[RMDB]
RNA sequence: GGGAACGACUCGAGUAGAGUCGAAAAUAAGAGACCAUUGAUAAUUCCUUCUGGGUAUUUGGGCCAUUCUCGGACCCAUCCGUUAACCUUGACAUUCUCUCGUCGUCCUUGGACAAGCAACUUGAGAACGUUGACCAAGCUUGAGAUGGCAUGUCCGUCAAUACCUCAAUUUCGAUUGAGGUAUUGAAAAAGAAACAACAACAACAAC
Reactivity to DMS in 0.01 (KOAc 150mM, MgCl2 10mM, bicine 150mM(pH8.5), 24C), signal-to-noise 2, nucleotides 027 to 156: u010a110a200g010a120g020a110c060c040a160u000u000g000a150u010a080a170u000u010c020c000u000u000c080u000g020g030g020u000a040u000u000u000g020g000g010c000c010a050u000u000c040u020c080g000g010a040c000c000c020a010u000c060c100g010u000u000a060a100c050c020u020u010g010a080c050a070u000u000c000u010c010u000c010g030u000c020g030u000c020c020u000u000g050g020a060c090a100a120g000c040a030a040c010u000u000g000a060g000a040a060c060g020u010u010g020a120c050c030a090a100g010c020u000u010g010a130g000a090u000g000g040c080a100u010g030u000c000c010g010
Reactivity to 2A3 in 0.01 (KOAc 150mM, MgCl2 10mM, bicine 150mM(pH8.5), 24C), signal-to-noise 4, nucleotides 027 to 156: u190a020a040g050a010g020a050c030c050a060u080u120g080a050u090a230a090u120u140c030c000u050u110c080u130g040g000g030u070a150u050u090u060g030g000g000c030c020a060u160u060c090u060c050g110g060a230c020c000c000a010u000c010c010g060u060u110a080a070c000c030u020u070g020a020c010a060u100u000c020u000c000u010c010g070u010c020g030u060c030c000u030u100g030g020a020c010a060a030g030c000a010a060c000u040u060g010a030g010a130a040c040g060u030u050g050a060c030c020a060a000g020c020u080u120g020a050g010a110u060g020g000c060a040u060g000u010c010c010g000
Structure probing data (DMS and 2A3) for a 207-nucleotide construct. For 2A3 the reverse transcriptase was SuperScript II with manganese. For 2A3, 4,600 sequencing reads were counted. The RNA was probed in 150 mM KOAc, 10 mM MgCl2 and 150 mM bicine (pH 8.5) at 24 C. 2A3 is a SHAPE reagent: it acylates the 2'-hydroxyl of flexible nucleotides of all four kinds.